[RMDB]
RNA sequence: GGGAACGACUCGAGUAGAGUCGAAAACAGUCAUCAUAUCAGUAGACUGAUGGAUUGAGAGAUGAAGGGCGAGAGGUUUGUCCUGGUCCACGCAAGGCAGAUAGGGGAGAUAGUGCUUCUCUUAUGACCUAAAAAUAAAGUUCGCUUUAUUUUUAGGAAAAGAAACAACAACAACAAC
Reactivity to DMS in 0.01 (KOAc 150mM, MgCl2 10mM, bicine 150mM(pH8.5), 24C), signal-to-noise 7, nucleotides 027 to 126: c050a100g010u000c020a080u000c040a080u000a170u000c060a070g010u010a120g010a080c060u000g010a090u000g010g000a060u000u000g000a080g010a110g000a070u000g010a090a070g010g010g020c040g010a070g010a110g000g000u010u010u000g000u010c020c020u000g010g010u000c030c050a050c120g010c080a050a060g000g000c040a050g010a100u000a040g010g010g000g010a060g010a150u000a080g010u010g000c070u000u000c030u000c020u000u000a090u010g000a180
Reactivity to 2A3 in 0.01 (KOAc 150mM, MgCl2 10mM, bicine 150mM(pH8.5), 24C), signal-to-noise 5, nucleotides 027 to 126: c010a000g070u000c010a040u020c010a020u130a020u210c030a030g170u160a060g120a140c040u010g010a060u040g040g030a040u050u120g060a050g010a000g010a060u080g070a060a060g030g010g010c040g010a060g020a040g130g020u070u100u120g030u050c000c010u010g010g000u000c020c010a020c020g060c000a030a040g060g000c000a010g030a110u100a040g000g020g000g000a030g000a010u070a030g100u080g070c000u030u020c010u010c000u060u070a090u160g050a090
This 177-nucleotide RNA was probed chemically with DMS and 2A3.
Reactivities are given for positions 27 through 126.
The DMS profile rests on 10,972 reads.